[RMDB]
RNA sequence: GGGAACGACUCGAGUAGAGUCGAAAAGAUAUGGAGAGAGGCAAGCCAGGGAAAUGUAUCGGAAACGAUACAGUUCCCUGUGAUGACCCUCUCUCCUAAGUCAAACCUAUCGCUUCGGCGAUAGGAACUGUGACUCACACUUCGGUGUGAGUCACAGAAAAGAAACAACAACAACAAC
Reactivity to DMS in 0.01 (KOAc 150mM, MgCl2 10mM, bicine 150mM(pH8.5), 24C), signal-to-noise 1, nucleotides 027 to 126: g000a080u020a280u030g000g000a020g010a000g000a010g020g000c010a110a180g000c080c000a010g010g000g000a000a010a000u000g010u000a000u000c000g020g000a110a090a240c000g010a000u000a000c000a010g000u000u000c000c000c000u000g020u010g010a020u000g040a290c300c000c000u000c010u000c000u010c000c010u000a010a040g020u000c050a150a070a150c000c000u000a020u000c000g010c000u010u000c230g050g000c000g000a020u000a000g000g000a000a060